[RMDB]
RNA sequence: GGGAACGACUCGAGUAGAGUCGAAAAGAUAUGGAGCUGUAUACAGCGAUGAGUACAUCCAUCUCGGAAACGAGAUGGAGUGUACGAGCUGUGCAGCUCCUAAGUCAAAGAAUGGUUCGCCAUUCAAGUUUUAUGCACUCUUCGGAGUGCAUAAAACAAAAGAAACAACAACAACAAC
Reactivity to DMS in 0.01 (KOAc 150mM, MgCl2 10mM, bicine 150mM(pH8.5), 24C), signal-to-noise 2, nucleotides 027 to 126: g030a070u000a300u000g030g020a020g040c000u010g020u000a070u030a300c050a000g040c000g030a100u010g030a300g010u000a000c000a060u030c020c000a000u000c000u000c000g000g000a120a090a130c030g000a010g050a050u000g000g000a000g020u020g020u010a000c000g000a150g000c000u000g080u000g000c020a000g000c000u030c010c000u000a000a050g000u010c040a120a190a120g010a000a020u000g030g020u000u020c300g040c000c000a000u000u010c020a030a150
Reactivity to 2A3 in 0.01 (KOAc 150mM, MgCl2 10mM, bicine 150mM(pH8.5), 24C), signal-to-noise 1, nucleotides 027 to 126: g010a000u030a040u220g020g000a000g000c020u010g050u060a270u110a300c000a000g030c100g070a160u300g200a070g040u050a030c000a000u000c020c000a020u000c010u000c000g050g040a110a110a020c040g000a000g000a010u010g050g030a000g000u000g000u020a010c000g030a030g000c000u000g000u000g030c010a000g040c000u000c000c000u010a010a000g000u000c030a020a040a040g020a050a000u020g030g020u070u140c240g050c150c040a000u030u030c050a040a010

The record gives the reactivity of an RNA of 177 nucleotides to DMS and 2A3. In probing experiments dimethyl sulfate is read out at A N1 and C N3, which are open when not base-paired. For DMS the reverse transcriptase was MarathonRT. For 2A3, 1,676 sequencing reads were counted. The reactions ran in a buffer of 150 mM KOAc, 10 mM MgCl2 and 150 mM bicine (pH 8.5), at 24 C.